[RMDB]
RNA sequence: GGGAACGACUCGAGUAGAGUCGAAAACCAUUCCUUAUACCUUGAGUAUUGCUGAAUUCAGUUUAGCGUGCAUGCUCUUGGCUAUUCUCAUAGUCAUUGUCAAAUUUGGAGUUACUUAUUCGUCAAUAAAACACUACCACGUUCGCGUGGUAGUGAACACUUAGAAGCUGUUCGCAGCUUCUAAGUGAAAAGAAACAACAACAACAAC
Reactivity to 2A3 in 0.01 (KOAc 150mM, MgCl2 10mM, bicine 150mM(pH8.5), 24C), signal-to-noise 5, nucleotides 027 to 156: c000c000a020u040u060c020c010u100u110a040u040a140c010c000u040u050g030a010g030u020a050u120u170g010c010u020g050a120a100u150u180c060a140g180u070u070u140a030g020c060g050u050g030c030a020u030g000c000u000c000u030u000g000g000c000u030a040u110u120c110u040c070a090u050a060g050u030c020a060u030u130g100u110c050a100a090a110u060u090u070g030g000a050g020u090u080a070c050u120u160a110u170u150c070g070u050c060a080a090u050a130a150a020a010c000a000c000u000a000c000c000a000c000g040u070u060c150g030c010g090u000g010g000u000a000g000u000g000a000a000
Reactivity to DMS in 0.01 (KOAc 150mM, MgCl2 10mM, bicine 150mM(pH8.5), 24C), signal-to-noise 2, nucleotides 027 to 156: c030c020a240u000u010c010c050u000u010a180u000a040c020c030u020u020g010a080g030u000a050u000u000g030c000u000g000a090a110u000u020c100a190g010u000u010u000a030g020c040g050u000g000c060a150u000g000c000u000c020u000u000g000g010c000u010a060u000u000c080u000c130a140u000a090g020u000c030a060u010u000g020u000c040a090a050a150u010u000u000g040g000a220g010u000u000a070c060u000u000a100u040u000c060g030u000c020a040a100u000a060a080a110a090c000a010c010u000a020c020c000a030c010g020u000u010c300g060c000g070u000g000g030u000a010g000u010g020a030a100